[RMDB]
RNA sequence: GGGAACGACUCGAGUAGAGUCGAAAAGAUAUGGAUGCUCGUAUCGUCGUUGAAAUCGGAAACGAUGGAGACGUUACGAGGCAUCCUAAGUCAAACUCGGGACAGAUGUUCGCAUCUGUCCCGAGAAGGAUUAAUCGAAGUUCGCUUCGAUUAAUCCAAAAGAAACAACAACAACAAC
Reactivity to 2A3 in 0.01 (KOAc 150mM, MgCl2 10mM, bicine 150mM(pH8.5), 24C), signal-to-noise 3, nucleotides 027 to 126: g020a020u060a050u160g000g000a010u010g000c000u000c020g010u010a010u010c010g020u010c020g230u290u030g010a040a040a010u010c010g010g010a110a040a040c020g000a000u010g000g000a030g000a010c000g000u000u000a000c000g000a070g070g030c000a010u000c000c000u000a070a010g030u000c050a060a060a080c000u000c000g000g010g000a000c000a010g000a000u010g040u110u190c300g020c140a000u000c000u000g000u000c000c000c010g000a000g000a000a010
Reactivity to DMS in 0.01 (KOAc 150mM, MgCl2 10mM, bicine 150mM(pH8.5), 24C), signal-to-noise 4, nucleotides 027 to 126: g010a050u000a300u020g000g000a010u000g000c000u000c000g020u000a010u000c010g000u000c000g000u010u010g000a100a110a010u010c010g000g000a190a110a190c000g000a010u000g000g010a120g000a000c010g000u000u000a010c000g020a020g020g040c000a000u000c000c000u010a000a100g010u000c050a110a120a170c000u000c000g010g000g000a010c010a010g000a010u000g010u000u010c280g010c000a000u000c000u000g000u000c000c000c000g000a000g000a030a050

This 177-nucleotide RNA was probed chemically with 2A3 and DMS. For DMS the reverse transcriptase was MarathonRT. Conditions: 150 mM KOAc, 10 mM MgCl2 and 150 mM bicine (pH 8.5), 24 C.